Description: The data come from the RNA Mapping Database (RMDB), library M2RFPK. An RNA of 207 nucleotides, treated with DMS and 2A3 and read out base by base. The 2A3 profile rests on 2,378 reads. The DMS profile rests on 2,451 reads. Values cover nucleotides 27 to 156.
RNA sequence: GGGAACGACUCGAGUAGAGUCGAAAAACAAGUGGUGGUAGUCCGCCACUCUAAGGGGACGCCUUUAGAAGAACAGGCUAGGGGGUAUUCCGGUGUGGGAUACUUAGUAAUAUGCAACGCUAAUUGCUCAAGGAUAGAUGAUUCGUCAUCUAUCCAACUACGAAACAUGAUUCGUCAUGUUUCGUAGAAAAGAAACAACAACAACAAC
Reactivity to DMS in 0.01 (KOAc 150mM, MgCl2 10mM, bicine 150mM(pH8.5), 24C), signal-to-noise 1, nucleotides 027 to 156: a110c060a050a080g030u000g010g040u000g020g030u000a150g030u000c020c030g040c010c000a020c010u040c000u040a050a040g000g000g000g000a150c230g040c000c040u000u000u000a050g020a050a110g010a050a050c050a070g050g010c030u000a200g110g000g010g030g000u000a030u000u000c020c010g040g000u010g010u020g010g000g000a060u000a010c000u010u000a030g000u010a080a090u000a070u000g000c010a090a060c060g010c020u010a110a100u000u000g000c000u020c100a100a170g030g030a040u000a000g010a020u010g020a110u000u000c300g040u000c000a000u000c000u000a000u000c000c000a000a030
Reactivity to 2A3 in 0.01 (KOAc 150mM, MgCl2 10mM, bicine 150mM(pH8.5), 24C), signal-to-noise 4, nucleotides 027 to 156: a010c130a140a000g010u000g020g000u020g010g070u070a080g080u050c010c010g000c000c000a010c000u020c000u000a020a020g000g010g020g050a030c090g150c000c000u010u020u050a040g050a110a020g040a070a030c040a080g040g000c010u060a060g060g000g030g020g010u020a020u020u040c020c010g150g060u210g030u190g060g000g000a010u020a020c010u030u070a030g020u040a040a120u060a050u300g010c020a010a070c090g020c090u070a090a140u100u110g010c020u040c160a130a070g010g000a010u010a000g010a010u000g000a020u010u050c170g060u010c070a000u000c000u000a000u000c000c000a000a000
For 2A3 the reverse transcriptase was SuperScript II with manganese.